[RMDB]
RNA sequence: GGGAACGACUCGAGUAGAGUCGAAAAGUUUCACUAUGCGACCAUGUUUGGAUCUCAAUCAAAAGACACUGCGUCUCGAUCGUCGCCGUGUCACUAACAAUGAGCGGAAACAGCGUAUCGGGCGUGCAGCACUAUAACAAUUCGUUGUUAUAGUGCUAAAAGAAACAACAACAACAAC
Reactivity to 2A3 in 0.01 (KOAc 150mM, MgCl2 10mM, bicine 150mM(pH8.5), 24C), signal-to-noise 9, nucleotides 027 to 126: g000u010u040u040c060a060c080u150a100u190g040c030g050a060c010c040a060u110g160u140u110u080g150g030a160u020c030u020c050a100a130u030c040a060a090a040a050g070a040c040a020c110u090g000c010g060u040c040u060c110g060a050u040c020g070u030c010g000c010c000g020u040g230u030c000a000c010u040a050a010c020a040a070u040g000a010g010c010g020g010a070a150a070c050a040g020c010g030u100a030u060c020g010g010g000c020g020u060g020c020
Reactivity to DMS in 0.01 (KOAc 150mM, MgCl2 10mM, bicine 150mM(pH8.5), 24C), signal-to-noise 9, nucleotides 027 to 126: g020u000u000u000c030a120c140u010a080u000g020c100g010a070c050c020a070u010g010u000u000u000g020g010a130u010c030u000c050a070a120u010c140a060a060a100a090g000a060c080a050c090u000g010c010g010u000c010u010c060g010a040u000c060g010u000c300g010c010c030g010u000g010u000c010a020c040u000a090a080c240a110a180u000g000a130g000c040g000g000a080a060a140c140a120g000c040g010u010a030u000c030g010g000g010c020g010u000g010c230